[RMDB]
Chemical mapping of a 177-nucleotide RNA with DMS and 2A3.
Values cover nucleotides 27 to 126.
RNA sequence: GGGAACGACUCGAGUAGAGUCGAAAAGAUAUGGACUUGCAUGUGAGCGAGAGAUUGUUCGGAAACGAACAAUGGAAUGCUCCAUGGCAAGUCCUAAGUCAAAGGUUGGGCGUUCGCGCCCAACCAAGUUCCGUAAUAAGUUCGCUUAUUACGGAACAAAAGAAACAACAACAACAAC
Reactivity to DMS in 0.01 (KOAc 150mM, MgCl2 10mM, bicine 150mM(pH8.5), 24C), signal-to-noise 5, nucleotides 027 to 126: g010a040u000a300u000g000g000a010c000u000u000g020c010a020u000g010u020g010a010g030c010g000a140g010a300g010a020u000u010g000u010u000c000g030g000a120a120a170c010g000a010a000c000a010a010u000g000g000a300a180u010g000c000u000c000c010a010u000g010g020c000a000a010g000u000c010c000u000a020a080g000u000c050a090a120a120g000g020u000u000g020g000g030c000g070u000u010c300g020c010g000c000c000c000a000a000c000c010a020a030
Reactivity to 2A3 in 0.01 (KOAc 150mM, MgCl2 10mM, bicine 150mM(pH8.5), 24C), signal-to-noise 4, nucleotides 027 to 126: g050a010u090a080u160g000g000a000c010u000u010g000c010a010u020g230u260g110a000g010c040g030a100g000a000g020a240u000u000g000u010u000c000g020g040a070a070a080c020g000a000a000c010a010a010u020g020g090a100a010u090g010c000u000c000c000a010u020g060g090c010a000a000g000u000c000c000u000a010a000g030u000c040a060a070a080g010g000u010u010g010g010g010c030g060u100u190c300g030c020g000c140c000c010a010a010c010c000a000a000
For DMS the reverse transcriptase was MarathonRT. The RNA was probed in 150 mM KOAc, 10 mM MgCl2 and 150 mM bicine (pH 8.5) at 24 C.